This 177-nucleotide RNA was probed chemically with 2A3 and DMS. The data come from the RNA Mapping Database (RMDB), library M2PK90. For 2A3, 1,794 sequencing reads were counted. Reactivities are given for positions 27 through 126. Conditions: 150 mM KOAc, 10 mM MgCl2 and 150 mM bicine (pH 8.5), 24 C.
RNA sequence: GGGAACGACUCGAGUAGAGUCGAAAAAGAAAUAGCGAUUCUCGAAGGAGUUGAGUCCUUCGAGGAAUGCUAAGCAAAGAUGCAGAACUAUCAAUGAACGACUUUGCUCAUCUUUGUAUACAAAAAAACGUCUAUAAGUGUUCGCACUUAUAGACGUAAAAGAAACAACAACAACAAC
Reactivity to 2A3 in 0.01 (KOAc 150mM, MgCl2 10mM, bicine 150mM(pH8.5), 24C), signal-to-noise 2, nucleotides 027 to 126: a000g090a000a080a060u040a000g000c010g060a060u030u010c000u000c000g010a000a010g000g040a020g040u200u170g160a060g130u000c000c000u000u000c000g000a010g010g000a000a010u040g000c000u030a050a010g000c010a000a000a000g010a000u030g020c100a010g020a110a050c040u100a090u220c030a070a170u190g070a150a030c090g100a050c060u120u160u170g000c000u010c010a010u020c000u000u000u000g060u010a110u060a080c110a050a120a000a010a030a020
Reactivity to DMS in 0.01 (KOAc 150mM, MgCl2 10mM, bicine 150mM(pH8.5), 24C), signal-to-noise 3, nucleotides 027 to 126: a070g000a080a080a150u000a020g010c000g010a110u000u000c000u000c000g010a040a010g010g000a030g000u000u010g000a260g010u010c000c000u000u010c000g010a010g010g000a010a030u000g010c000u000a030a150g010c010a020a010a010g000a020u010g000c110a020g010a040a080c120u000a100u000c020a070a110u020g010a090a110c220g000a060c090u000u010u000g010c030u000c050a040u000c000u000u000u010g000u000a120u010a050c090a010a010a090a080a040a060